[RMDB]
RNA sequence: GGGAACGACUCGAGUAGAGUCGAAAAGAUAUGGAUCUGAUACGACUUCGAUGAAAGUAAUCGGAAACGAUUACUGGAGAAGGUAUAGAUCCUAAGUCAAAUCGUAGGGACUUCGGUCCCUACGAAAGAAAUAGUAAACCUUCGGGUUUACUAUUUCAAAAGAAACAACAACAACAAC
Reactivity to 2A3 in 0.01 (KOAc 150mM, MgCl2 10mM, bicine 150mM(pH8.5), 24C), signal-to-noise 5, nucleotides 027 to 126: g010a010u030a010u060g000g010a010u000c030u160g170a070u070a230c160g270a300c220u020u010c070g300a300u060g000a000a000a020g010u020a000a010u010c010g000g000a010a010a000c000g000a000u000u000a010c000u000g000g000a020g000a010a010g130g000u050a060u050a100g010a000u000c000c000u000a000a000g000u000c030a010a000a220u060c010g000u010a000g000g020g000a010c000u070u070c300g090g010u000c000c020c000u010a000c000g000a010a000a000
Reactivity to DMS in 0.01 (KOAc 150mM, MgCl2 10mM, bicine 150mM(pH8.5), 24C), signal-to-noise 4, nucleotides 027 to 126: g010a020u010a080u010g000g010a010u010c000u000g010a060u000a030c070g030a250c300u000u000c010g000a140u010g000a190a100a020g000u000a000a000u000c010g010g000a020a010a040c000g010a010u000u000a000c000u000g010g000a000g010a010a040g040g010u000a020u000a020g000a010u000c000c000u000a010a060g000u000c010a110a110a200u000c000g020u000a000g000g000g010a020c000u000u020c290g030g010u000c000c000c000u000a000c000g000a010a040a110
Overview:
This 177-nucleotide RNA was probed chemically with 2A3 and DMS. For 2A3 the reverse transcriptase was SuperScript II with manganese. The reactions ran in a buffer of 150 mM KOAc, 10 mM MgCl2 and 150 mM bicine (pH 8.5), at 24 C. DMS adducts were read by reverse transcription with MarathonRT.